[RMDB]
Structure probing data (DMS and 2A3) for a 177-nucleotide construct. Conditions: 150 mM KOAc, 10 mM MgCl2 and 150 mM bicine (pH 8.5), 24 C.
RNA sequence: GGGAACGACUCGAGUAGAGUCGAAAACGACAUGGCUUCGGCCAUGUCGAAAGCACGAGUGAGACCGAAACGGAGGUAGGUCCAACUACCUUCUCACUCAAAAAAUCCGUUUGUUCGCAAACGGAAACGGUAAUACAAAGUUCGCUUUGUAUUACCGAAAAGAAACAACAACAACAAC
Reactivity to DMS in 0.01 (KOAc 150mM, MgCl2 10mM, bicine 150mM(pH8.5), 24C), signal-to-noise 6, nucleotides 027 to 126: c010g010a010c010a010u000g010g010c000u000u010c210g010g010c000c000a000u000g000u000c000g000a010a070a120g010c230a090c200g010a020g010u000g000a020g000a220c180c080g010a060a080a100c230g010g000a060g010g010u000a000g000g000u000c160c130a090a200c000u000a010c000c000u010u010c000u010c000a000c010u020c010a000a010a080a070a090a070u000c000c000g010u000u000u000g010u000u010c180g020c010a010a000a010c000g000g010a000a020a070
Reactivity to 2A3 in 0.01 (KOAc 150mM, MgCl2 10mM, bicine 150mM(pH8.5), 24C), signal-to-noise 5, nucleotides 027 to 126: c000g000a000c000a000u000g000g010c010u070u040c230g080g010c000c010a000u000g010u000c000g000a010a010a000g100c050a020c240g010a010g010u010g000a010g030a050c080c080g100a230a220a040c170g070g010a020g000g000u010a010g030g030u030c060c010a110a140c000u000a000c000c000u070u040c010u000c000a010c000u000c000a040a060a020a010a000a070u020c000c000g000u000u000u020g040u030u060c250g000c150a000a000a010c000g000g000a030a010a000